[RMDB]
RNA sequence: GGGAACGACUCGAGUAGAGUCGAAAAGAUAUGGAAUUGUACGGUGCAACAGCCAUUAUCGGAAAUAAACAUCGGAAACGAUGUUUAUUUCCGAUAAUGGACAUGCACUGUACUGAUUCCUAAGUCACUAAUUGUAGACGUUCGCGUCUACAAUUAGAAAAGAAACAACAACAACAAC
Reactivity to DMS in 0.01 (KOAc 150mM, MgCl2 10mM, bicine 150mM(pH8.5), 24C), signal-to-noise 3, nucleotides 027 to 126: g000a040u010a300u010g010g000a000a010u000u010g010u000a000c000g020g040u000g000c000a040a070c300a220g010c000c000a010u000u000a020u000c010g010g000a030a020a010u000a000a020a010c000a000u000c000g020g000a130a100a210c000g000a000u000g000u000u000u000a010u000u000u000c010c000g020a000u000a000a010u010g000g010a010c090a110u000g000c000a000c000u010g000u000a000c010u000g020a000u000u000c000c000u000a090a150g010u000c030a180